Structure probing data (2A3 and DMS) for a 207-nucleotide construct. Values cover nucleotides 27 to 156. DMS adducts were read by reverse transcription with MarathonRT. Conditions: 150 mM KOAc, 10 mM MgCl2 and 150 mM bicine (pH 8.5), 24 C.
RNA sequence: GGGAACGACUCGAGUAGAGUCGAAAAGGGAUGAGAAAGCAAGGACAGCAUGCCGAGGUCCCAGGUCCUCGUAAAACCUUUGGGAAAAAGACAACUGCCAACGAAGAGCUGGCUCUCGCUGCUUAAUCUAAACAAUUAAGUGAGCGCGCUUAUCGGAGAAACUACUGUAGUUCGCUACAGUAGUUUCAAAAGAAACAACAACAACAAC
Reactivity to 2A3 in 0.01 (KOAc 150mM, MgCl2 10mM, bicine 150mM(pH8.5), 24C), signal-to-noise 4, nucleotides 027 to 156: g020g000g020a050u060g010a030g030a090a040a020g030c030a020a040g010g030a030c020a020g030c030a050u090g050c030c010g010a010g010g000u020c010c000c020a010g000g030u300c010c010u020c010g100u140a020a010a030a020c010c000u050u030u010g010g000g000a090a030a020a020a000g090a050c090a100a040c120u110g020c030c010a020a010c040g060a060a120g020a010g090c030u030g000g000c000u020c000u010c030g010c000u020g000c000u020u000a010a000u020c020u040a000a010a070c020a020a020u010u010a010a000g000u050g300a020g000c000g000c000g010c040u150u120a070u130c020g030g010a040
Reactivity to DMS in 0.01 (KOAc 150mM, MgCl2 10mM, bicine 150mM(pH8.5), 24C), signal-to-noise 1, nucleotides 027 to 156: g000g020g030a120u010g010a070g010a060a020a050g100c020a090a070g000g040a020c060a050g000c020a120u000g030c020c000g000a180g020g030u010c000c000c030a040g010g010u000c010c040u000c160g030u010a030a040a060a050c030c020u010u000u010g050g000g010a060a000a070a140a160g010a090c030a050a030c000u010g030c010c020a010a040c030g000a060a140g010a240g020c030u000g050g030c000u000c020u010c020g030c010u000g010c010u010u000a000a010u000c010u000a110a050a150c240a010a000u000u000a010a030g020u000g010a040g030c010g030c050g010c030u000u000a120u000c070g000g050a300